[RMDB]
Structure probing data (2A3 and DMS) for a 170-nucleotide construct. The reactions ran in a buffer of 150 mM KOAc, 10 mM MgCl2 and 150 mM bicine (pH 8.5), at 24 C. It was measured as part of the RMDB library 15KLIB.

RNA sequence: GGGAACGACUCGAGUAGAGUCGAAAAGCUGUGGGACAUGCAUCCGUAGACCAUUUCUCUGCUGUAAAUGCUGCUAUGAUCAUGUUAUAGCAACUCCACAUAAGAUGGUUUUGUCUGUUUCUCCUUAGAACAUAAUGCUUCGGCAUUAUGAAAAGAAACAACAACAACAAC
Reactivity to 2A3 in 0.01 (KOAc 150mM, MgCl2 10mM, bicine 150mM(pH8.5), 24C), signal-to-noise 9, nucleotides 027 to 129: g010c030u030g000u030g070g050g040a010c020a010u070g060c040a000u000c060c050g030u010a010g070a200c010c040a030u010u060u010c100u030c080u160g160c060u060g100u230a000a030a030u080g030c090u070g010c030u030a020u090g020a050u050c030a040u140g030u050u080a070u070a040g020c010a040a080c040u030c030c020a120c030a040u200a070a090g100a130u220g060g050u040u030u030u030g030u050c140u060g020u000u010u020c030u060c010c060u070u140a060g040a140a010
Reactivity to DMS in 0.01 (KOAc 150mM, MgCl2 10mM, bicine 150mM(pH8.5), 24C), signal-to-noise 6, nucleotides 027 to 129: g030c030u020g050u020g020g050g000a060c000a070u000g020c150a000u020c060c100g050u000a040g000a090c180c020a040u000u020u010c060u020c150u020g040c070u030g000u050a060a070a060u000g040c030u000g040c020u030a040u030g030a050u000c100a050u030g000u010u030a060u020a000g000c060a050a000c050u010c010c040a060c120a080u070a050a100g030a120u030g000g020u010u030u020u040g030u000c110u030g000u000u000u000c000u000c100c080u060u030a090g020a110a200